[RMDB]
RNA sequence: GGGAACGACUCGAGUAGAGUCGAAAAAUUGAGCUGGUGGUUUCAGGACUACUCUCUGAGUGGAAUUAGAGGCGAGUUGAAGAUUCAGUGAAAGUAGGCAAGUCUAUGGUGUCAGUGUCAUCAAGCCAGUACUGAUGGGGGUCAUGUAUGAAGUGGAUCGAAAUAGAUCAUUCGUGAUCUAUUUCGAAAAAGAAACAACAACAACAAC
Reactivity to 2A3 in 0.01 (KOAc 150mM, MgCl2 10mM, bicine 150mM(pH8.5), 24C), signal-to-noise 3, nucleotides 027 to 156: a000u070u090g010a010g020c030u020g010g030u020g040g000u040u060u090c070a060g020g050a020c010u040a020c020u050c010u010c050u080g030a020g050u060g030g080a110a160u100u050a110g010a030g050g010c030g020a030g020u030u080g040a070a040g020a060u050u090c030a010g020u030g110a070a050a030g070u080a040g020g040c050a050a010g030u020c020u080a090u090g020g010u020g040u040c050a060g010u010g030u130c040a040u060c020a030a030g020c020c020a020g030u040a040c030u050g010a080u060g020g000g000g000g010u020c030a010u070g060u060a080u090g030a060a010g010u020g030g030a020
Reactivity to DMS in 0.01 (KOAc 150mM, MgCl2 10mM, bicine 150mM(pH8.5), 24C), signal-to-noise 3, nucleotides 027 to 156: a110u010u010g010a110g030c000u010g000g000u010g020g020u000u020u020c050a090g010g020a110c030u000a060c030u000c030u000c060u010g000a070g060u000g000g000a080a090u000u010a070g020a090g040g010c050g000a100g030u000u010g010a110a100g000a120u000u010c040a090g020u010g010a090a060a090g020u000a050g010g000c030a050a150g020u010c060u010a090u000g020g020u000g010u000c020a080g000u000g010u000c040a080u000c050a040a110g030c030c010a100g020u000a100c060u000g020a070u010g010g000g010g040g020u010c030a040u010g020u000a090u010g000a050a110g020u000g000g010a230
This 207-nucleotide RNA was probed chemically with 2A3 and DMS.
Reactivities are given for positions 27 through 156.
The 2A3 profile rests on 5,016 reads.